RNA sequence: GGGAACGACUCGAGUAGAGUCGAAAAAGAAUGGGGAAGAGAGACUCAGCCGCAUGGCUGUCAGCGGAGAUGACUGUGUGGUAAAGCCUCUGGAUGAUCGCUUUGCCACUUCACUUCACUUCCUCAACGCCAUGUCAAAGGUCCGCAAAGACAUCCAGUCACCUAGUUUAUUCGUAAACUAGGUGACAAAAGAAACAACAACAACAAC
Reactivity to DMS in 0.01 (KOAc 150mM, MgCl2 10mM, bicine 150mM(pH8.5), 24C), signal-to-noise 2, nucleotides 027 to 156: a110g000a110a120u000g010g000g020g030a060a070g010a170g010a240g030a070c040u000c070a110g000c050c060g010c090a070u010g040g080c010u000g000u010c020a120g030c010g040g000a110g020a060u000g030a060c300u010g020u050g020u050g010g000u000a030a000a050g000c000c030u000c020u010g030g010a090u000g010a150u000c040g020c030u000u010u000g010c020c010a030c000u020u010c020a040c050u010u000c020a220c000u000u000c000c010u000c000a050a060c040g020c030c010a080u020g000u000c050a100a140a120g010g010u000c050c000g010c060a090a050a140g020a080c040a110u000c010c050a300
Reactivity to 2A3 in 0.01 (KOAc 150mM, MgCl2 10mM, bicine 150mM(pH8.5), 24C), signal-to-noise 4, nucleotides 027 to 156: a000g150a070a080u060g010g000g000g010a010a020g080a000g030a010g050a080c030u020c100a000g010c020c010g120c150a140u230g020g000c040u050g040u050c060a020g030c060g040g010a020g030a060u040g010a030c090u050g040u020g000u000g150g000u020a010a000a020g010c030c000u030c060u140g160g080a150u210g030a050u140c030g000c000u010u000u000g000c000c000a000c000u040u010c020a000c010u040u030c000a020c020u010u000c000c000u020c010a010a000c000g000c000c000a030u100g030u020c050a110a070a030g030g010u040c030c020g010c090a030a060a000g010a010c010a020u030c030c020a030
The record gives the reactivity of an RNA of 207 nucleotides to DMS and 2A3. 2A3 adducts were read by reverse transcription with SuperScript II with manganese. For DMS, 2,608 sequencing reads were counted. DMS (dimethyl sulfate) methylates the pairing face of unpaired adenines and cytosines. The reactions ran in a buffer of 150 mM KOAc, 10 mM MgCl2 and 150 mM bicine (pH 8.5), at 24 C.